Conditions: 150 mM KOAc, 10 mM MgCl2 and 150 mM bicine (pH 8.5), 24 C. Structure probing data (DMS) for a 177-nucleotide construct. It was measured as part of the RMDB library OK2TST.
[RMDB]
RNA sequence: GGGAACGACUCGAGUAGAGUCGAAAAGAAAGCACUAGUUAGAAAAGACAAGGUACAUUGAUCUGCACACAGGAGGUGCUCAGCGACGCCAGCACUGAUGGGCUCCUCCUGCCUUGAGUGAAGAGCAUGUUGUUCCACACUUCGGUGUGGAACAACAAAAAGAAACAACAACAACAAC
Reactivity to DMS in 0.01 (KOAc 150mM, MgCl2 10mM, bicine 150mM(pH8.5), 24C), signal-to-noise 1, nucleotides 027 to 126: g060a060a050a050g010c020a030c040u010a060g010u000u000a100g030a130a140a060a050g000a110c030a020a080g010g010u000a070c110a030u030u000g010a030u000c090u000g020c070a050c290a200c060a000g000g030a020g010g000u000g000c000u000c010a080g010c010g030a060c110g020c070c070a050g000c050a110c110u000g010a110u010g010g010g010c000u000c000c000u000c000c000u000g000c110c070u010u000g030a080g050u000g000a060a020g010a070g020c080a060